[RMDB]
RNA sequence: GGGAACGACUCGAGUAGAGUCGAAAAGUAUGGAUGCCACCGAGACGGCUCAAUCACACAAGUGCCAACGAUAACGAGGCGCUCGCUAUUGCUGCGUAACUGACGGCCUGACGGUCUGACGUUACAAAAAACGAAAAGUGGUUCGCCACUUUUCGAACAUUAGUCGCAACUUCGGUUGCGACUAAUGAAAAGAAACAACAACAACAAC
Reactivity to 2A3 in 0.01 (KOAc 150mM, MgCl2 10mM, bicine 150mM(pH8.5), 24C), signal-to-noise 3, nucleotides 027 to 156: g070u070a050u140g060g030a050u070g050c030c010a040c050c070g010a010g020a070c040g060g000c020u020c040a070a070u100c030a020c020a020c020a150a040g020u020g060c030c040a140a060c100g080a120u090a160a050c070g010a060g070g020c020g010c010u030c000g030c040u090a050u120u230g000c070u070g020c020g020u000a020a000c010u030g040a010c010g000g030c010c010u140g100a060c120g010g000u000c010u010g010a000c010g000u000u020a000c000a010a030a000a000a010a010c020g010a000a000a000a010g010u000g020g000u030u030c090g060c050c000a000c000u010u000u000u000c000g000a020a000
Reactivity to DMS in 0.01 (KOAc 150mM, MgCl2 10mM, bicine 150mM(pH8.5), 24C), signal-to-noise 1, nucleotides 027 to 156: g030u000a070u000g040g040a100u000g020c000c060a110c070c070g000a190g020a190c120g020g000c080u000c050a100a120u000c030a150c030a140c020a070a020g100u000g030c010c030a060a090c000g000a110u010a090a110c030g020a140g000g010c000g040c000u000c010g030c040u000a070u000u010g010c030u000g000c040g000u000a040a110c030u000g000a300c300g000g000c010c010u000g070a180c300g060g000u010c080u020g010a290c230g000u000u000a060c030a000a000a040a040a110a160c030g000a000a030a010a010g030u010g010g010u000u010c300g000c000c000a010c000u000u020u000u030c000g000a070a170